[RMDB]
RNA sequence: GGGAACGACUCGAGUAGAGUCGAAAACUUAGACUACGGUCUAAGAACGCUAUUCUUCGGAAUAGCGAAGGACAACGCGUGAGCGUUGUCCAAGACGUGACUACGGUCACGUCAAGACGGUUACUUCGGUAACCGUCAAGUAACGCGUUCGCGCGUUACACUCCUCUACUACGGUAGAGGAGAGGCUGAGCGUGAGCUCAGCCAUAGGGGAGUCAGGGUUCGGACCCCCUCCCCGAACCUAGGGUAACACUGACUGUGGAGGGGAUACGUGAGUAUUCGUACUCACGAAAAGAAACAACAACAACAAC
Reactivity to DMS in 0.01 (KOAc 150mM, MgCl2 10mM, bicine 150mM(pH8.5), 24C), signal-to-noise 1, nucleotides 027 to 266: c000u000u010a000g000a020c000u000a160c190g030g010u000c000u010a000a000g010a130a300c020g000c000u010a000u010u000c000u010u030c140g000g000a020a000u000a000g000c000g020a130a020g000g000a010c010a020a030c000g020c010g050u060g010a280g040c000g000u000u010g030u010c000c010a090a080g000a010c020g000u000g000a010c000u000a120c250g030g010u000c000a000c000g000u000c000a050a080g000a010c000g000g000u000u000a000c010u000u000c160g020g010u000a020a020c000c000g030u000c000a010a070g010u000a000a020c000g030c010g010u000u030c260g010c000g010c010g010u010u000a010c000a300c040u010c000c000u010c000u010a000c000u010a100c150g030g020u000a010g000a010g020g010a000g010a020g000g050c000u000g010a080g000c040g000u030g020a140g020c000u000c030a000g000c020c030a000u000a010g010g000g000g020a030g010u000c060a030g020g000g010u000u010c050g010g030a230c120c020c000c050c000u020c000c000c000c000g000a030a000c010c000u000a140g000g000g070u010a070a070c170a130c170u000g000a060c090u000g010u020g000g030a030g020g000g000g000a150u020a010
Reactivity to 2A3 in 0.01 (KOAc 150mM, MgCl2 10mM, bicine 150mM(pH8.5), 24C), signal-to-noise 7, nucleotides 027 to 266: c000u000u000a000g000a000c010u020a010c220g090g000u000c000u000a000a000g010a060a010c000g000c000u000a010u000u010c000u020u060c270g120g010a000a000u010a000g000c000g010a040a080g010g000a000c000a000a000c010g030c020g030u110g090a060g010c000g000u010u010g000u000c000c000a000a020g000a000c000g000u000g000a000c000u020a030c260g070g000u000c000a000c000g000u000c010a000a050g000a000c000g000g000u000u010a000c010u020u090c240g100g000u000a000a000c000c000g000u000c000a000a020g000u000a000a000c010g010c010g010u030u060c240g020c000g000c000g100u000u000a000c010a020c000u000c000c000u000c000u000a000c000u010a030c200g100g000u000a000g000a000g000g000a000g000a010g000g010c000u010g000a000g010c010g030u040g020a020g010c010u000c000a000g000c000c000a010u100a000g000g000g000g000a020g010u030c040a020g020g000g010u010u010c010g020g070a090c010c010c010c000c000u010c000c010c000c010g000a000a000c000c010u080a080g130g100g090u100a100a030c060a050c130u070g080a030c020u120g090u110g250g000a010g010g000g000g010a010u040a020